Source information
Structure probing data (DMS and 2A3) for a 177-nucleotide construct. For DMS, 1,712 sequencing reads were counted.
RNA sequence: GGGAACGACUCGAGUAGAGUCGAAAAUCCUGGCUCAAGUUCAUGGGACCCGCUCUAAUCUGAGGGACACUCCACUUCCAGAUGCAGAAAUUACCUGGUUCACAGACGGCAGCAGCUUCAUACAGGAUCUGUUACUGACUUUCGAGUCAGUAACAGAAAAAGAAACAACAACAACAAC
Reactivity to DMS in 0.01 (KOAc 150mM, MgCl2 10mM, bicine 150mM(pH8.5), 24C), signal-to-noise 2, nucleotides 027 to 126: u000c000c000u010g020g030c080u010c060a080a110g000u010u000c030a160u000g000g000g040a140c050c020c020g000c060u000c020u000a090a090u000c060u000g020a110g010g000g000a140c070a090c050u000c040c080a050c080u010u000c010c030a060g010a040u000g000c060a100g000a080a060a100u010u010a080c090c030u000g020g030u000u000c030a090c090a110g000a130c110g000g000c010a050g000c040a050g020c050u000u000c070a080u000a110c140a080g020g000a090
Reactivity to 2A3 in 0.01 (KOAc 150mM, MgCl2 10mM, bicine 150mM(pH8.5), 24C), signal-to-noise 2, nucleotides 027 to 126: u000c000c000u000g010g010c020u040c080a120a050g030u150u050c010a070u130g040g100g030a110c000c010c030g000c000u050c020u070a080a270u070c030u040g040a060g020g000g020a020c000a040c030u060c030c010a040c030u040u000c020c010a030g000a080u060g030c040a020g070a060a060a040u080u030a070c010c040u020g000g040u130u080c060a040c010a080g010a090c050g050g000c010a000g010c000a000g030c050u090u080c020a040u080a180c050a030g030g050a060